[RMDB]
RNA sequence: GGGAACGACUCGAGUAGAGUCGAAAAGAUAUGGAUGAUUCGCUAGAACGUAACCAUCGGAAACGAUGGGAGAAGUUCUUGGACCGAGAUCAUCCUAAGUCAAAAGUGUCACGUUCGCGUGACACAAGCAUCAACAUCAGUUCGCUGAUGUUGAUGCAAAAGAAACAACAACAACAAC
Reactivity to DMS in 0.01 (KOAc 150mM, MgCl2 10mM, bicine 150mM(pH8.5), 24C), signal-to-noise 2, nucleotides 027 to 126: g000a040u000a300u010g000g020a010u000g020a010u000u000c020g010c010u000a000g000a000a000c010g010u020a100a300c000c000a010u000c000g000g000a100a120a120c020g050a000u000g020g010g000a030g010a120a250g010u000u000c000u010u010g050g000a120c300c020g020a060g020a000u000c000a030u000c000c000u000a030a080g000u020c050a110a070a090a100g000u000g010u000c000a000c000g000u000u020c140g020c000g000u000g020a010c000a000c000a050a050
Reactivity to 2A3 in 0.01 (KOAc 150mM, MgCl2 10mM, bicine 150mM(pH8.5), 24C), signal-to-noise 2, nucleotides 027 to 126: g050a020u110a050u150g010g010a000u000g000a030u000u030c000g030c040u040a000g010a010a000c000g000u010a050a050c000c000a010u000c020g040g020a100a040a060c010g000a020u000g000g010g000a010g020a010a010g020u000u000c000u000u060g050g040a060c090c110g090a110g050a170u000c000a010u030c000c010u010a180a030g070u050c070a020a030a070a120g010u000g010u000c020a010c040g020u060u090c300g020c010g030u020g010a000c000a000c000a000a010
Structure probing data (DMS and 2A3) for a 177-nucleotide construct.
The reactions ran in a buffer of 150 mM KOAc, 10 mM MgCl2 and 150 mM bicine (pH 8.5), at 24 C.
The DMS profile rests on 1,694 reads.
2A3 adducts were read by reverse transcription with SuperScript II with manganese.
It was measured as part of the RMDB library TTRDEL.